[RMDB]
RNA sequence: GGGAACGACUCGAGUAGAGUCGAAAAAACAAACAUCAAAUCGCAUAGCAUAGAGUCAAAAAAAUAGAGAGCUUUGCGAGACCUACCAAGGGUGAAGAGAUACCAUCCAAGGAGCUGAAGAGAAAUCGAGAGCUCACGGCGUUCGCGCCGUGAGCAACCCUACCAUACAGUUCGCUGUAUGGUAGGGAAAAGAAACAACAACAACAAC
Reactivity to 2A3 in 0.01 (KOAc 150mM, MgCl2 10mM, bicine 150mM(pH8.5), 24C), signal-to-noise 2, nucleotides 027 to 156: a000a000c180a110a140a020c110a080u160c060a080a130a050u030c040g010c040a010u040a060g000c020a050u140a130g040a090g100u120c100a160a190a050a080a060a040a070u230a040g130a000g010a010g010c000u000u070u070g000c000g000a000g020a030c030c000u070a140c020c010a040a050g020g010g000u070g030a060a040g090a000g000a040u140a140c000c050a020u030c000c020a000a030g000g010a010g000c090u110g050a080a020g070a100g040a110a120a030u080c090g000a030g010a000g250c000u020c000a000c010g000g010c000g000u040u130c090g000c000g010c100c000g000u000g000a000g000c010a000a000
The data come from the RNA Mapping Database (RMDB), library M2RFPK. An RNA of 207 nucleotides, treated with 2A3 and read out base by base. For 2A3, 880 sequencing reads were counted. Reactivities are given for positions 27 through 156.